[RMDB]
RNA sequence: GGGAACGACUCGAGUAGAGUCGAAAAGCGCCGCAAACCAUCUAUGUUUCGGCGACGCCGGGUAAUUACGAGCUGGAAAAAUCCGGCGGCGAUGUGGUGGAUCAGGUGGUGCGUCCAACCGGAUUGCCCACCCUACAAAAUUCGUUUUGUAGGGUGGAAAAGAAACAACAACAACAAC
Reactivity to DMS in 0.01 (KOAc 150mM, MgCl2 10mM, bicine 150mM(pH8.5), 24C), signal-to-noise 3, nucleotides 027 to 126: g010c040g010c010c000g020c140a040a100a090c010c070a050u010c030u010a100u010g000u000u010u000c050g010g010c000g000a030c020g020c000c000g000g010g010u000a050a130u010u000a140c070g000a170g050c150u010g010g010a030a100a110a140a030u000c020c000g010g010c010g010g000c000g010a050u000g010u000g020g020u000g000g010a090u010c150a050g010g010u010g000g020u010g010c030g020u010c020c010a100a080c100c090g000g000a090u000u010g010c140
Reactivity to 2A3 in 0.01 (KOAc 150mM, MgCl2 10mM, bicine 150mM(pH8.5), 24C), signal-to-noise 3, nucleotides 027 to 126: g000c020g010c010c000g030c070a040a000a080c010c010a040u040c050u140a150u180g120u010u070u080c040g030g010c010g010a010c010g010c000c000g020g000g020u040a090a120u120u110a110c080g040a090g170c150u170g110g010a080a060a000a000a010u020c010c000g010g010c000g000g000c020g000a020u080g040u050g120g010u040g020g000a110u090c060a060g000g120u020g020g080u040g010c020g040u010c000c010a030a060c030c050g030g050a090u080u210g030c010
Chemical mapping of a 177-nucleotide RNA with DMS and 2A3. For 2A3, 4,232 sequencing reads were counted. It was measured as part of the RMDB library OK2TST. The DMS profile rests on 4,160 reads.